RNA sequence: GGGAACGACUCGAGUAGAGUCGAAAAGGGGUCUUGAUGUAGGGAGCGGAAGGUCUUGGAUUUAUGGAGCUGAAGCCUCCACGGCUCCAUUGUCAGACCGCGCUCCCGCAGAUAUCAAGACGGAGGCACCCAAAAGCAGCGUGUUCGCACGCUGCAAGGUACGUAUUCCCUUCGGGGAAUACGUACCAAAAGAAACAACAACAACAAC
Reactivity to 2A3 in 0.01 (KOAc 150mM, MgCl2 10mM, bicine 150mM(pH8.5), 24C), signal-to-noise 1, nucleotides 027 to 156: g150g000g000g090u000c010u010u020g000a010u050g010u110a180g000g000g000a000g080c080g060g160a300a030g010g110u110c050u260u260g250g000a040u280u170u050a070u050g010g000a030g000c010u000g000a110a000g000c000c000u000c000c020a000c000g000g000c000u010c000c000a060u050u000g020u060c040a000g000a000c000c000g000c040g000c000u010c080c000c000g000c000a000g000a000u010a000u020c000a010a010g020a000c030g000g000a020g000g000c030a020c040c000c040a120a300a000a060g000c000a000g080c000g000u080g160u130u300c300g000c100a000c000g030c000u000g050c000a000a000